[RMDB]
RNA sequence: GGGAACGACUCGAGUAGAGUCGAAAAGUGGGAGAGGGGGAGAACACUUCGAGAGUUGGGGGAUAGAAAGAGGGCGAAUUUCCUCGGGAGGAUCCCCCAAGCUUCCAACAGGCAAGCAACAAGAUAGUACGUCCUCAGUUCGCUGAGGACAAAAGAAACAACAACAACAAC
Reactivity to 2A3 in 0.01 (KOAc 150mM, MgCl2 10mM, bicine 150mM(pH8.5), 24C), signal-to-noise 4, nucleotides 027 to 129: g110u100g030g000g030a030g000a050g000g020g000g040g020a030g000a010a020c050a040c040u040u080c030g030a030g010a010g030u010u070g000g000g010g010g020a010u010a020g050a050a090a010g000a040g000g000g010c060g060a020a100u110u140u020c000c000u010c000g020g010g010a050g050g020a010u010c000c000c010c000c000a030a000g000c000u020u010c020c000a080a040c040a060g000g030c020a000a030g030c000a000a090c000a030a060g040a070u140a030g130u100a030c100
Reactivity to DMS in 0.01 (KOAc 150mM, MgCl2 10mM, bicine 150mM(pH8.5), 24C), signal-to-noise 4, nucleotides 027 to 129: g040u030g000g040g060a050g000a050g020g030g020g030g050a020g040a060a070c140a070c080u000u020c080g060a080g000a030g030u000u000g000g000g000g000g000a000u040a040g010a050a280a040g000a050g030g020g030c260g030a140a120u030u080u040c020c010u000c020g000g000g010a130g070g000a120u000c030c010c000c030c040a070a030g010c000u070u000c010c040a070a150c130a090g050g030c220a000a000g010c080a020a140c210a060a140g060a090u070a080g020u100a000c300